[RMDB]
RNA sequence: GGGAACGACUCGAGUAGAGUCGAAAAGCACUCUCUGCCCUGACUGUUCCGGCUCCCCCAGACCGGCCCACGGGACCGCACACCCGACGGCCGGUGGUUGCUCCGGGCUGCGGUGCCGGGCGGGUUGGCAUCUUUGUAACUUCGGUUACAAAGAUGCAAAAGAAACAACAACAACAAC
Reactivity to 2A3 in 0.01 (KOAc 150mM, MgCl2 10mM, bicine 150mM(pH8.5), 24C), signal-to-noise 3, nucleotides 027 to 126: g030c030a030c040u040c000u000c030u050g010c000c010c000u010g060a050c030u040g030u200u120c010c000g010g010c010u080c000c020c000c000c000a010g020a030c000c000g060g000c000c010c000a040c060g040g020g080a130c020c000g020c010a050c010a060c040c010c020g070a110c020g050g000c010c000g030g000u020g000g000u060u110g010c040u020c030c000g000g000g000c020u020g000c010g010g000u030g060c020c000g000g000g000c010g010g000g000u060u040g070
Reactivity to DMS in 0.01 (KOAc 150mM, MgCl2 10mM, bicine 150mM(pH8.5), 24C), signal-to-noise 3, nucleotides 027 to 126: g010c100a080c050u000c010u000c040u010g000c010c000c030u000g010a090c060u000g000u000u010c000c010g000g020c040u010c060c010c010c010c040a120g000a030c040c010g020g030c050c000c120a120c040g030g010g010a060c020c000g000c010a070c130a120c020c030c010g010a150c210g000g000c000c000g020g030u000g000g010u040u020g000c110u050c080c000g000g010g020c300u000g010c270g000g020u000g000c010c000g010g020g000c050g000g010g000u000u010g010